Chemical mapping of a 177-nucleotide RNA with DMS and 2A3. For DMS the reverse transcriptase was MarathonRT. The reactions ran in a buffer of 150 mM KOAc, 10 mM MgCl2 and 150 mM bicine (pH 8.5), at 24 C. It was measured as part of the RMDB libraries RFM100 and RFMREP. As a SHAPE reagent, 2A3 marks flexible, mostly unpaired nucleotides at the ribose 2'-OH.
[RMDB]
RNA sequence: GGGAACGACUCGAGUAGAGUCGAAAAGUAAUUCCUUACUAGUUAAUGAGUUUCAGACUUAAGUAUGAUGUUGUGUUUGCAUAUAGUUCGGGAAACCGAACUUGAGUAACAAUUUGUUACUCAUUUAUACCAAAAUCAUAUUCGUAUGAUUUUGGUAAAAAGAAACAACAACAACAAC
Reactivity to DMS in 0.01 (KOAc 150mM, MgCl2 10mM, bicine 150mM(pH8.5), 24C), signal-to-noise 4, nucleotides 027 to 126: g020u020a120a210u000u000c000c000u000u000a030c030u000a070g020u000u010a050a100u010g010a120g010u000u010u020c080a070g020a040c030u010u000a100a070g010u000a050u010g020a100u000g000u000u000g020u000g000u000u000u000g010c090a070u010a090u000a020g010u000u000c000g000g000g000a110a080a200c000c000g000a000a000c010u000u010g010a020g010u000a010a010c000a090a210u010u030u010g010u000u000a000c000u000c000a040u010u010u020a090
Reactivity to 2A3 in 0.01 (KOAc 150mM, MgCl2 10mM, bicine 150mM(pH8.5), 24C), signal-to-noise 1, nucleotides 027 to 126: g070u000a090a040u040u000c000c000u010u010a040c000u010a130g170u080u240a150a060u100g120a090g090u130u180u290c170a100g000a050c000u050u090a130a070g010u020a130u300g190a150u070g050u020u010g000u000g110u040u000u120g010c020a000u140a010u060a190g010u000u000c000g000g010g000a010a030a010c000c000g000a060a000c020u000u050g000a000g000u000a010a000c000a020a210u090u140u270g020u000u020a000c000u010c000a000u000u010u000a130